This 177-nucleotide RNA was probed chemically with 2A3 and DMS. The RNA was probed in 150 mM KOAc, 10 mM MgCl2 and 150 mM bicine (pH 8.5) at 24 C. Reactivities are given for positions 27 through 126.
[RMDB]
RNA sequence: GGGAACGACUCGAGUAGAGUCGAAAAGCUACUGUUCGCGGCUCAGCGGGCAACUCAGCGGCUCUCGACGCCGGUCUACGACGGCGAGGACGGUGACGUUCGGCAGAUCACGGGCGAGCUUCGGCAGAACCGAAUGGAAAUUCGUUUCCAUUCGGUUAAAAGAAACAACAACAACAAC
Reactivity to 2A3 in 0.01 (KOAc 150mM, MgCl2 10mM, bicine 150mM(pH8.5), 24C), signal-to-noise 4, nucleotides 027 to 126: g030c000u070a030c030u120g020u080u240c030g000c010g070g000c040u020c070a020g030c020g050g060g000c050a030a080c030u050c040a030g140c010g030g020c040u020c000u000c040g020a030c020g000c010c010g050g090u100c130u170a100c030g050a000c000g010g010c000g020a030g020g020a010c020g020g110u020g020a040c040g020u020u070c050g060g010c030a030g030a170u100c040a030c090g040g030g040c020g020a020g010c030u030u050c030g030g000c040a010g030
Reactivity to DMS in 0.01 (KOAc 150mM, MgCl2 10mM, bicine 150mM(pH8.5), 24C), signal-to-noise 6, nucleotides 027 to 126: g010c050u000a130c050u010g020u000u010c030g030c040g010g010c070u000c060a110g020c030g010g000g000c080a030a040c070u000c060a040g010c010g000g010c130u000c010u000c020g000a040c020g010c010c000g010g020u010c180u010a100c030g010a030c010g000g000c010g010a040g000g010a040c010g010g000u000g010a040c140g010u000u000c050g020g010c060a100g000a100u010c070a080c120g000g010g020c060g000a050g000c030u000u010c020g020g000c080a090g010

For DMS the reverse transcriptase was MarathonRT. DMS (dimethyl sulfate) methylates the pairing face of unpaired adenines and cytosines.